[RMDB]
RNA sequence: GGGAACGACUCGAGUAGAGUCGAAAAACAGCUAUAAAGGCGGCCGCCGGCGCAGAGCCGCCACUGGGCUGCGCCCCUCCCGGGAACCCCCUCUCUUGGAUGCUCUUUGAAGUGGGAGAGGGAGGCGGCUCAAGUUAUAUUUCGAUAUAACUUGAGCAAAAGAAACAACAACAACAAC
Reactivity to DMS in 0.01 (KOAc 150mM, MgCl2 10mM, bicine 150mM(pH8.5), 24C), signal-to-noise 1, nucleotides 027 to 126: a100c010a050g000c030u000a110u030a090a160a160g020g010c050g050g000c000c050g010c130c120g000g020c120g030c050a120g010a140g000c010c000g030c000c020a020c160u010g000g030g000c000u000g000c120g000c050c000c020c040u000c000c000c000g030g030g040a090a120c020c030c010c000c000u000c000u000c000u000u000g020g000a140u000g000c000u010c010u000u010u000g020a050a050g010u000g010g000g010a040g000a060g000g030g010a030g040g010c210g010
Reactivity to 2A3 in 0.01 (KOAc 150mM, MgCl2 10mM, bicine 150mM(pH8.5), 24C), signal-to-noise 1, nucleotides 027 to 126: a000c000a000g020c030u120a040u190a300a120a170g060g000c020g020g020c020c040g140c120c060g230g000c060g000c090a040g050a060g080c010c000g000c020c030a000c000u070g060g030g020c000u010g010c000g060c010c000c000c010u000c000c000c030g080g040g000a100a080c000c000c020c010c020u020c020u000c010u000u020g100g040a060u130g050c000u000c050u130u200u180g010a110a000g000u160g040g020g010a000g000a000g030g050g010a090g000g050c080g190
This 177-nucleotide RNA was probed chemically with DMS and 2A3. The reactions ran in a buffer of 150 mM KOAc, 10 mM MgCl2 and 150 mM bicine (pH 8.5), at 24 C. The data come from the RNA Mapping Database (RMDB), library OK2TRN.